[RMDB]
RNA sequence: GGGAACGACUCGAGUAGAGUCGAAAAUGUAGUUGUCAAUGUGGAUGGCGUUGACUAUCCGGCAGUGAACAAUGGUGACGGCACCUGGACGCUUGCAGACAAUACACUUCCAACACUUGCAGACGGAGCUACCUAUGGAGUUCGCUCCAUAGGUAGCAAAAGAAACAACAACAACAAC
Reactivity to DMS in 0.01 (KOAc 150mM, MgCl2 10mM, bicine 150mM(pH8.5), 24C), signal-to-noise 2, nucleotides 027 to 126: u010g000u000a080g020u000u000g010u000c000a080a080u000g040u010g000g020a010u000g000g000c030g020u000u010g010a150c000u000a020u000c000c020g000g030c000a050g020u000g000a110a080c050a080a040u010g010g010u000g010a140c190g010g020c030a070c030c020u000g010g010a230c090g010c030u000u000g040c020a080g000a040c060a020a010u000a030c040a020c050u000u000c000c010a100a060c240a070c130u010u010g010c060a130g000a090c110g000g010a170
Reactivity to 2A3 in 0.01 (KOAc 150mM, MgCl2 10mM, bicine 150mM(pH8.5), 24C), signal-to-noise 2, nucleotides 027 to 126: u060g010u040a020g140u030u040g010u010c060a050a100u170g070u130g130g000a040u010g000g050c110g140u130u140g100a130c010u000a010u020c010c000g010g020c010a030g020u000g090a040a020c050a010a240u130g020g000u000g040a110c130g080g160c040a030c010c010u040g040g010a000c010g000c050u070u200g030c040a050g000a040c020a010a010u020a010c050a000c000u040u000c010c000a070a050c050a030c060u060u260g010c040a020g010a070c020g070g020a020